[RMDB]
RNA sequence: GGGAACGACUCGAGUAGAGUCGAAAAGAUAUGGAUCAAGAAUCCUGCCAUCCGACAUGGGAGCUUUCGGGUCGGAAACGACCUUCGAGCUUUGAUCAUGGGAUGGCAGGAUUCUUGAUCCUAAGUCGACAUGACAAAUGUUCGCAUUUGUCAUGUCAAAAGAAACAACAACAACAAC
Reactivity to DMS in 0.01 (KOAc 150mM, MgCl2 10mM, bicine 150mM(pH8.5), 24C), signal-to-noise 1, nucleotides 027 to 126: g000a070u020a300u020g000g000a000u000c000a020a020g030a030a010u000c000c000u000g000c010c000a000u000c010c000g010a220c020a000u000g000g000g000a010g010c000u000u000u000c300g000g000g020u000c010g000g000a080a120a230c000g000a020c000c000u010u000c230g000a000g000c010u000u000u000g010a160u000c010a010u000g000g010g000a010u000g000g020c010a000g000g000a000u000u000c000u000u000g000a010u000c000c010u010a010a070g000u000c100

This 177-nucleotide RNA was probed chemically with DMS. The RNA was probed in 150 mM KOAc, 10 mM MgCl2 and 150 mM bicine (pH 8.5) at 24 C. The DMS profile rests on 1,400 reads.